RNA sequence: GGGAACGACUCGAGUAGAGUCGAAAAUAACCUCGCGCGACAUGCUUUCAUACUACAAGCGGGAAACUACCUGGCUUUAAGUCGCAACGUGGAACUCUUCAGCCAGUUCGGUUUUGAGCUCCGAGGUAUCUUCUUAUGCCUUCGGGCAUAAGAAGAUAAAAGAAACAACAACAACAAC
Reactivity to 2A3 in 0.01 (KOAc 150mM, MgCl2 10mM, bicine 150mM(pH8.5), 24C), signal-to-noise 1, nucleotides 027 to 126: u060a020a040c000c000u020c010g020c010g050c000g060a010c010a060u120g020c010u070u200u120c140a190u210a220c060u020a050c080a030a000g000c010g000g150g000a070a000a000c090u140a110c030c010u010g160g000c000u020u070u120a040a020g010u040c010g000c110a030a100c070g020u160g000g040a040a030c010u030c020u060u030c030a040g020c010c000a110g120u110u220c070g040g000u000u090u040u070g040a000g030c000u010c050c000g000a010g000g020u030
Reactivity to DMS in 0.01 (KOAc 150mM, MgCl2 10mM, bicine 150mM(pH8.5), 24C), signal-to-noise 1, nucleotides 027 to 126: u010a090a160c000c000u020c040g080c300g010c040g000a070c060a160u000g060c070u000u010u010c150a120u000a160c170u000a100c300a030a030g000c000g040g010g000a020a050a090c140u000a040c260c000u010g000g000c000u000u000u000a040a030g000u030c030g000c060a110a090c080g000u000g010g010a040a020c020u000c060u000u010c150a030g010c010c020a080g000u030u030c110g010g030u000u000u000u000g000a160g020c020u010c060c030g010a020g000g000u010
The record gives the reactivity of an RNA of 177 nucleotides to 2A3 and DMS.
It was measured as part of the RMDB library OK2TST.
The RNA was probed in 150 mM KOAc, 10 mM MgCl2 and 150 mM bicine (pH 8.5) at 24 C.
For DMS, 703 sequencing reads were counted.
For 2A3, 856 sequencing reads were counted.